[RMDB]
RNA sequence: GGGAACGACUCGAGUAGAGUCGAAAAUUCGGUCGCCGCGGAUCACUGGCGUCCAGCGGAGAAACAGGAGCUCGUCUCCUUCCUUUCGCUGCUGGCUCCACAUCCGAUCGUCGCUGAAGCGCCACGCGGAUUUAUAAUACUUCGGUAUUAUAAAUCCAAAAGAAACAACAACAACAAC
Reactivity to 2A3 in 0.01 (KOAc 150mM, MgCl2 10mM, bicine 150mM(pH8.5), 24C), signal-to-noise 4, nucleotides 027 to 126: u010u010c000g010g030u230c020g000c030c000g000c010g000g010a000u010c000a000c060u000g000g000c020g050u110c010c000a000g010c000g050g020a030g010a040a040a090c300a170g010g010a010g000c070u150c300g290u130c090u000c000c000u010u030c000c000u000u010u020c010g000c020u010g000c000u000g010g000c000u000c000c020a040c020a020u000c020c000g020a260u050c000g010u000c010g000c010u020g010a020a010g040c040g070c050c000a050c050g080c090
Reactivity to DMS in 0.01 (KOAc 150mM, MgCl2 10mM, bicine 150mM(pH8.5), 24C), signal-to-noise 3, nucleotides 027 to 126: u000u000c010g010g000u010c010g020c040c010g020c020g000g000a020u000c020a040c070u000g000g010c070g000u010c000c000a020g010c000g010g000a050g000a000a010a020c210a010g010g000a010g010c030u010c300g000u010c000u000c000c000u000u000c030c020u000u000u000c000g000c000u000g000c000u000g000g000c010u000c000c000a010c110a020u000c000c010g000a040u010c010g000u000c010g000c010u000g000a030a050g010c150g010c030c020a080c230g020c230